[RMDB]
RNA sequence: GGGAACGACUCGAGUAGAGUCGAAAAAGGCUGUUAAGGAUGUUGAAACUAUAGCAGAUGCAAGGGAGUGCAGAGGAGGGUUCCAUACACGGGAAACUUCUAAACAGUUUCAGGGGGGUAAAGAAACCGUAAAACUAAGCUUCGGCUUAGUUUUACGAAAAGAAACAACAACAACAAC
Reactivity to DMS in 0.01 (KOAc 150mM, MgCl2 10mM, bicine 150mM(pH8.5), 24C), signal-to-noise 1, nucleotides 027 to 126: a130g010g010c010u000g010u010u010a130a140g020g010a120u000g010u030u030g000a120a160a050c060u010a060u010a070g020c060a030g010a050u010g030c040a060a100g010g020g020a120g000u000g010c120a060g000a090g030g010a050g000g000g010u010u000c050c040a080u000a080c200a040c250g020g000g010a090a020a040c010u000u030c120u030a050a080a060c270a030g030u000u000u000c030a130g000g000g000g000g000g000u000a000a070a140g000a060a120a050c150

Chemical mapping of a 177-nucleotide RNA with DMS.
DMS (dimethyl sulfate) methylates the pairing face of unpaired adenines and cytosines.
DMS adducts were read by reverse transcription with MarathonRT.
The reactions ran in a buffer of 150 mM KOAc, 10 mM MgCl2 and 150 mM bicine (pH 8.5), at 24 C.